An RNA of 177 nucleotides, treated with DMS and 2A3 and read out base by base.
Conditions: 150 mM KOAc, 10 mM MgCl2 and 150 mM bicine (pH 8.5), 24 C.
For 2A3, 459 sequencing reads were counted.
[RMDB]
RNA sequence: GGGAACGACUCGAGUAGAGUCGAAAACAGAGAAAGGACUGGAGACUGUGAAAUGUUGUGGAAAGAAGGCUCUGCGCUUGGCCAGCUGAGGAAACUCGAAUACUAAGACACGCACCAAAUCCUUACAGACGAUCUAUCCAUUCGUGGAUAGAUCGUCAAAAGAAACAACAACAACAAC
Reactivity to DMS in 0.01 (KOAc 150mM, MgCl2 10mM, bicine 150mM(pH8.5), 24C), signal-to-noise 2, nucleotides 027 to 126: c050a000g020a040g000a080a020a040g000g000a060c050u040g000g010a070g020a050c050u030g000u000g000a010a060a050u010g010u000u000g000u000g030g020a020a110a130g000a100a050g000g000c000u060c060u000g000c150g000c020u020u000g010g000c040c020a050g010c090u020g080a040g000g000a010a050a200c010u000c040g000a180a100u000a050c070u050a060a060g010a060c080a070c050g000c040a060c010c100a010a060a070u010c010c000u000u000a100c140a190
Reactivity to 2A3 in 0.01 (KOAc 150mM, MgCl2 10mM, bicine 150mM(pH8.5), 24C), signal-to-noise 1, nucleotides 027 to 126: c050a020g090a040g010a010a040a040g110g070a000c050u070g040g030a010g000a000c070u010g000u140g070a040a000a140u130g000u050u080g020u050g000g060a300a000a000g130a080a050g070g010c030u040c000u050g000c080g040c040u010u030g030g000c000c000a000g000c090u130g040a020g000g100a170a000a000c080u050c060g070a130a060u150a070c030u080a000a000g000a010c000a000c070g030c000a000c000c000a000a050a000u000c000c050u030u070a050c100a000